[RMDB]
RNA sequence: GGGAACGACUCGAGUAGAGUCGAAAAGAUAUGGACAUGACCAGGGAGCCUGAUGUCGGAAACGACAUCAAGGCGAGGAUCUGGCAUGUCCUAAGUCAAAACCUCCGUUCCUUCGGGAACGGAGGAAGUUGAACCAAAGGUUCGCCUUUGGUUCAACAAAAGAAACAACAACAACAAC
Reactivity to DMS in 0.01 (KOAc 150mM, MgCl2 10mM, bicine 150mM(pH8.5), 24C), signal-to-noise 1, nucleotides 027 to 126: g000a000u000a070u010g000g000a000c010a000u000g010a200c000c000a020g010g010g000a100g020c000c000u000g000a010u010g000u010c000g000g000a030a010a020c000g010a020c010a000u000c000a010a020g030g020c010g000a050g020g000a120u010c000u000g010g000c000a000u000g010u000c010c000u000a000a020g000u000c000a110a100a160a200c000c000u000c010c000g000u000u000c000c000u000u010c230g030g000g000a020a010c010g010g000a000g000g010a000a020
Reactivity to 2A3 in 0.01 (KOAc 150mM, MgCl2 10mM, bicine 150mM(pH8.5), 24C), signal-to-noise 2, nucleotides 027 to 126: g010a000u010a010u030g010g020a010c000a010u040g170a300c020c000a010g000g040g050a070g010c010c010u010g000a000u010g000u010c000g000g010a010a020a000c000g000a000c020a000u000c010a050a060g000g000c010g000a090g040g050a110u000c000u000g000g000c000a000u000g000u000c000c000u000a010a000g020u000c020a010a010a070a230c010c010u000c010c000g000u000u010c010c000u020u070c220g120g010g000a010a020c020g000g000a000g000g000a000a010